[RMDB]
RNA sequence: GGGAACGACUCGAGUAGAGUCGAAAAGCAGCACCUAAGUCAAAGUUCAUCGCACCUCUAAUUACUGACUUAACGCCAUUCCAAACGUUGGAAGCCCAGCCUGUUAUACCAGACCAAGCUCCGCGUAGCUAAACUGCCAUUUCGAUGGCAGUUUAGCAAAAGAAACAACAACAACAAC
Reactivity to DMS in 0.01 (KOAc 150mM, MgCl2 10mM, bicine 150mM(pH8.5), 24C), signal-to-noise 1, nucleotides 027 to 126: g010c100a040g020c040a070c060c000u010a120a100g000u010c040a010a150a080g010u000u000c040a020u000c100g000c060a060c050c020u000c010u000a070a090u000u010a060c040u000g020a140c050u000u010a030a090c160g030c030c070a050u000u010c020c000a060a110a080c080g000u000u010g020g000a040a060g020c000c040c060a090g000c020c000u000g000u030u000a070u020a130c190c000a040g000a020c040c050a080a140g020c030u000c000c020g010c070g000u000a090
Reactivity to 2A3 in 0.01 (KOAc 150mM, MgCl2 10mM, bicine 150mM(pH8.5), 24C), signal-to-noise 1, nucleotides 027 to 126: g000c030a010g000c020a020c040c040u090a060a030g030u000c040a100a050a050g060u100u000c030a070u070c150g010c040a050c020c030u000c010u060a080a140u100u100a060c030u030g130a020c000u000u070a060a010c040g000c000c000a070u090u010c020c020a040a080a080c030g040u020u140g000g040a130a010g000c000c000c000a000g050c010c000u010g030u130u060a110u070a120c060c000a000g050a010c010c010a020a000g010c010u010c000c000g000c010g040u020a020